Background: This 177-nucleotide RNA was probed chemically with DMS and 2A3. Conditions: 150 mM KOAc, 10 mM MgCl2 and 150 mM bicine (pH 8.5), 24 C.
RNA sequence: GGGAACGACUCGAGUAGAGUCGAAAAUUUCUCCUAUUCGUAGGAGAAAGAAGGACCACCGGGGAGGGUUAAGGCCAUACGGACAGCCGGGUCCACUGCCGAUAAGGGCUGAGUUCGCUCAGCCCAACUCUACCACUCUGUUCGCAGAGUGGUAGAGAAAAGAAACAACAACAACAAC
Reactivity to DMS in 0.01 (KOAc 150mM, MgCl2 10mM, bicine 150mM(pH8.5), 24C), signal-to-noise 1, nucleotides 027 to 126: u000u000u000c000u010c000c000u000a020u000u030c180g000u000a010g000g030a010g000a000a000a000g000a220a110g020g000a040c040c000a070c050c050g040g020g030g040a110g000g000g010u000u000a050a050g000g010c000c040a090u040a050c140g000g000a070c000a150g000c060c030g000g010g030u000c020c000a110c120u010g000c040c000g000a300u000a070a110g000g000g000c000u000g020a010g000u000u020c180g040c030u000c010a000g010c000c010c000a010a020
Reactivity to 2A3 in 0.01 (KOAc 150mM, MgCl2 10mM, bicine 150mM(pH8.5), 24C), signal-to-noise 1, nucleotides 027 to 126: u000u000u020c000u010c010c000u050a050u070u050c210g060u030a000g000g020a000g020a010a000a000g050a020a060g020g020a020c000c000a000c020c020g030g040g090g160a100g050g040g000u090u200a080a030g050g000c020c020a050u090a100c030g010g020a020c010a000g000c000c010g040g000g010u000c010c010a030c020u040g000c010c000g010a010u160a100a180g000g000g000c000u000g020a020g000u050u060c130g070c110u010c000a000g010c000c000c000a000a000
The 2A3 profile rests on 1,390 reads. The DMS profile rests on 951 reads. Reactivities are given for positions 27 through 126.